Structure probing data (2A3 and DMS) for a 177-nucleotide construct. DMS adducts were read by reverse transcription with MarathonRT. The reactions ran in a buffer of 150 mM KOAc, 10 mM MgCl2 and 150 mM bicine (pH 8.5), at 24 C.
RNA sequence: GGGAACGACUCGAGUAGAGUCGAAAAAGGCCGAUCAUGCGCGCAGUACAGUACGGCCGUACAGCGCACGCGGUACUAUAUAGCGCGGUACUCGGCGCACGAUCGGCCCUCGAGGCCGCGCUGUCGACCCUGUAAACAGGUUCGCCUGUUUACAGGGAAAAGAAACAACAACAACAAC
Reactivity to 2A3 in 0.01 (KOAc 150mM, MgCl2 10mM, bicine 150mM(pH8.5), 24C), signal-to-noise 4, nucleotides 027 to 126: a000g020g000c000c000g010a010u000c010a020u030g010c020g000c020g060c100a040g010u050a040c010a010g030u030a060c100g160g030c050c000g000u010a010c020a020g000c000g000c030a010c060g000c020g010g050u070a060c110u050a050u100a080u140a230g030c030g000c020g020g020u100a300c000u000c040g090g000c000g010c020a020c050g010a000u020c000g020g000c000c010c000u020c010g020a030g020g000c010c000g000c000g000c000u030g030u080c040g050a090
Reactivity to DMS in 0.01 (KOAc 150mM, MgCl2 10mM, bicine 150mM(pH8.5), 24C), signal-to-noise 4, nucleotides 027 to 126: a130g010g010c000c000g010a020u010c000a300u000g010c010g020c010g020c160a110g000u000a030c070a060g020u010a070c190g010g000c070c070g010u000a010c010a130g000c020g010c030a120c090g000c030g010g010u010a060c140u000a130u010a140u000a060g020c010g010c000g030g030u000a050c020u010c060g020g010c040g020c020a050c080g010a010u000c000g010g020c010c000c010u010c020g000a050g000g010c020c010g010c020g000c030u000g010u010c120g000a200